[RMDB]
RNA sequence: GGGAACGACUCGAGUAGAGUCGAAAACGCUCAUAGUGCUCGGCGUGUUAGUUCUAGUAGCGGCGCUCCUGGUGGCAAAAGUGUUGAUCAUCAUACUUGCUCCGCUCAUAGCCGGUGGUGUAGCGGCCUGACUGUCAACGUUCGCGUUGACAGUCAGAAAAGAAACAACAACAACAAC
Reactivity to DMS in 0.01 (KOAc 150mM, MgCl2 10mM, bicine 150mM(pH8.5), 24C), signal-to-noise 2, nucleotides 027 to 126: c050g010c010u000c070a060u010a070g020u000g010c030u010c020g020g000c050g000u000g020u030u020a100g010u030u010c100u010a120g010u000a040g010c040g010g020c140g030c010u010c160c050u010g000g010u010g000g000c050a010a040a150a150g030u020g020u000u020g010a100u010c040a040u000c030a020u010a100c100u010u000g010c030u000c010c020g010c010u010c040a060u010a120g000c030c000g010g020u000g030g010u000g000u020a040g010c000g010g000c090
Reactivity to 2A3 in 0.01 (KOAc 150mM, MgCl2 10mM, bicine 150mM(pH8.5), 24C), signal-to-noise 2, nucleotides 027 to 126: c020g010c020u030c060a060u100a120g230u090g000c080u070c060g000g000c020g040u060g070u130u150a100g030u260u110c090u110a050g000u100a000g040c020g000g000c010g010c010u090c020c020u040g050g000u020g010g000c030a030a020a160a270g140u290g090u170u150g070a300u050c000a020u010c000a020u020a180c020u000u050g000c000u010c040c010g000c020u030c020a110u090a010g000c000c000g060g000u000g070g030u070g030u010a060g040c080g020g010c000